An RNA of 177 nucleotides, treated with 2A3 and DMS and read out base by base. The 2A3 profile rests on 1,374 reads. The reactions ran in a buffer of 150 mM KOAc, 10 mM MgCl2 and 150 mM bicine (pH 8.5), at 24 C. It was measured as part of the RMDB library M2PK50. Values cover nucleotides 27 to 126.
RNA sequence: GGGAACGACUCGAGUAGAGUCGAAAAAGCUCCUGUUUCGACAGGAGCUGUGUGGCUGCCCUUUUGUGCUCGAUGUAGAGUGCUUUCCUGCCGGAAAGGGCAUGAGAGCUUGAUUCGUCAAGCUCAACGCUCUCGUCUAUUUCGAUAGACGAGAGCGAAAAGAAACAACAACAACAAC
Reactivity to 2A3 in 0.01 (KOAc 150mM, MgCl2 10mM, bicine 150mM(pH8.5), 24C), signal-to-noise 1, nucleotides 027 to 126: a000g010c000u020c030c000u040g000u000u100u060c190g060a000c010a020g000g000a000g010c000u000g000u020g000u010g040g020c050u040g000c030c000c000u000u010u020u030g070u040g000c000u000c000g080a110u240g120u190a020g000a010g030u040g000c000u000u060u010c020c010u050g050c020c010g010g000a040a030a010g000g020g010c000a000u110g120a080g010a000g000c010u000u000g000a020u010u080c200g070u020c060a000a000g010c020u000c000a000a000
Reactivity to DMS in 0.01 (KOAc 150mM, MgCl2 10mM, bicine 150mM(pH8.5), 24C), signal-to-noise 2, nucleotides 027 to 126: a010g000c010u000c000c000u010g000u000u000u020c140g010a020c000a020g000g000a000g010c000u010g000u030g020u010g010g000c100u010g000c010c000c030u010u020u000u000g010u000g000c000u010c000g010a210u010g030u000a120g010a020g010u000g020c070u010u010u000c000c000u000g000c030c040g010g010a030a010a010g000g000g010c010a080u020g010a170g000a000g000c000u000u010g000a050u000u030c220g010u020c000a010a010g010c010u010c020a070a080